[RMDB]
An RNA of 207 nucleotides, treated with 2A3 and DMS and read out base by base. It was measured as part of the RMDB library M2RFPK. The DMS profile rests on 2,977 reads. DMS adducts were read by reverse transcription with MarathonRT. DMS (dimethyl sulfate) methylates the pairing face of unpaired adenines and cytosines. For 2A3 the reverse transcriptase was SuperScript II with manganese.
RNA sequence: GGGAACGACUCGAGUAGAGUCGAAAAGGGUGAUGUCUCCUAACCUUUAUCAAUGGGGGCACUCGGUCGUGCUGUGGGUAGAAAUUUUAUUUCGUGCCUUCCUUAGACGCUUGUCGUCGGGAGUAUGUGGGACUGAUGAACUUCGGUUCAUCAGUAACAAGAAUGCACGGUUCGCCGUGCAUUCUUGAAAAGAAACAACAACAACAAC
Reactivity to 2A3 in 0.01 (KOAc 150mM, MgCl2 10mM, bicine 150mM(pH8.5), 24C), signal-to-noise 3, nucleotides 027 to 156: g050g020g000u080g010a070u060g020u000c010u020c030c010u010a040a080c010c020u160u240u150a220u180c080a070a090u200g010g010g000g020g000c010a030c020u040c010g040g000u020c020g040u010g010c020u060g010u090g000g000g050u030a020g080a020a070a050u210u200u140u150a160u070u100u080c060g040u070g000c000c000u070u000c020c010u020u050a030g000a020c000g060c040u110u300g100u250c010g000u010c000g010g020g000a030g010u090a100u150g030u060g030g000g030a010c000u000g000a000u000g000a000a000c000u020u070c290g070g000u000u000c000a000u000c000a000g000u000a010a030
Reactivity to DMS in 0.01 (KOAc 150mM, MgCl2 10mM, bicine 150mM(pH8.5), 24C), signal-to-noise 1, nucleotides 027 to 156: g000g030g050u000g020a080u010g010u000c010u000c000c030u000a080a100c060c030u000u010u000a090u010c100a080a090u010g020g060g010g050g040c000a040c060u000c040g040g000u000c050g010u000g030c020u020g000u010g010g010g010u010a160g000a030a040a100u000u010u010u050a070u010u050u010c020g010u000g020c000c020u000u000c030c010u000u010a140g020a050c040g040c030u000u010g010u000c000g000u000c020g000g030g000a110g030u000a050u000g000u000g010g030g010a080c000u000g000a030u000g000a010a020c000u000u010c280g010g020u000u010c000a020u020c000a000g020u000a000a220